[RMDB]
RNA sequence: GGGAACGACUCGAGUAGAGUCGAAAACGUCGUGAACUAGCGACAAUGCCGUAGAUCCAUCGUUAUCUAACCGAAACAUCGUGACUAGUCGUAGAAUAGAACCAGGAGAGGUCGCUGGCAAACAAAGACGGGGUGUCAGAUUCGUCUGACGCCCCGUAAAAGAAACAACAACAACAAC
Reactivity to DMS in 0.01 (KOAc 150mM, MgCl2 10mM, bicine 150mM(pH8.5), 24C), signal-to-noise 2, nucleotides 027 to 126: c070g000u000c080g050u030g000a210a080c060u010a170g000c050g000a020c000a070a110u080g010c010c000g000u020a070g010a060u000c070c090a010u000c080g000u000u000a100u000c010u000a100a050c220c140g000a010a120a060c110a090u040c030g000u030g020a190c050u000a060g000u000c080g000u020a110g000a110a020u000a020g010a080a110c100c050a000g010g020a030g020a070g020g040u000c000g000c050u010g000g010c030a070a150a050c030a050a070a090g030
Reactivity to 2A3 in 0.01 (KOAc 150mM, MgCl2 10mM, bicine 150mM(pH8.5), 24C), signal-to-noise 1, nucleotides 027 to 126: c010g050u020c000g010u040g020a010a200c090u000a010g000c010g080a000c000a000a000u150g050c000c000g010u000a000g000a040u030c050c000a030u010c060g060u010u060a110u090c010u010a000a100c060c030g060a000a090a000c020a050u050c010g020u010g040a030c000u030a020g020u040c100g020u010a010g040a040a000u070a050g030a000a020c000c030a040g000g070a170g000a000g000g010u010c010g000c010u000g050g000c000a090a000a000c000a010a160a020g080
An RNA of 177 nucleotides, treated with DMS and 2A3 and read out base by base. The 2A3 profile rests on 983 reads. Values cover nucleotides 27 to 126. DMS adducts were read by reverse transcription with MarathonRT. The data come from the RNA Mapping Database (RMDB), library OK1LIB. Values are in units of 0.01, from 0 to 300, in steps of 10.